[RMDB]
RNA sequence: GGGAACGACUCGAGUAGAGUCGAAAACGUGUCCGUCGGCGUAGCCGACAACAUGCCCAGGUAGCCCAGACCUUCAGGGCUACGGUGCGUUGCGACGCACGGUCUGAUUCUUCACAACGACGUUCACAAGAUCGGAUCACUUUCGAGUGAUCCGAAAGAGGAAAAGAUAUUUCGAUAUCUUUUCCUCAAAAGAAACAACAACAACAAC
Reactivity to DMS in 0.01 (KOAc 150mM, MgCl2 10mM, bicine 150mM(pH8.5), 24C), signal-to-noise 2, nucleotides 027 to 156: c030g030u000g000u000c010c090g040u000c000g000g010c000g030u010a120g020c000c000g010a040c000a050a010c010a020u000g000c020c000c020a130g020g040u000a020g030c010c010c040a200g010a150c100c090u000u000c100a180g010g010g010c010u000a000c010g020g020u000g020c060g050u000u000g000c040g030a130c020g000c010a050c020g020g030u000c040u010g000a190u020u000c090u000u000c030a120c020a040a120c030g000a050c030g020u000u000c020a100c070a100a140g010a210u000c010g020g030a030u000c000a020c010u000u000u000c290g010a060g040u000g010a020u000c000c000g010a010a010a070
Reactivity to 2A3 in 0.01 (KOAc 150mM, MgCl2 10mM, bicine 150mM(pH8.5), 24C), signal-to-noise 6, nucleotides 027 to 156: c030g000u020g010u060c110c130g010u000c000g000g020c220g120u170a080g040c000c000g040a010c000a000a000c020a020u080g030c000c000c010a010g070g010u020a020g000c020c020c090a080g040a140c010c050u130u100c130a070g000g000g000c000u010a000c000g010g010u030g000c000g010u030u120g060c130g080a000c010g010c010a000c030g000g020u040c060u070g060a120u100u040c020u120u130c080a060c040a220a090c090g080a030c050g050u050u070c080a030c030a190a090g040a180u030c000g010g000a000u000c000a000c010u020u100u100c120g070a010g000u000g010a000u000c000c000g000a000a000a000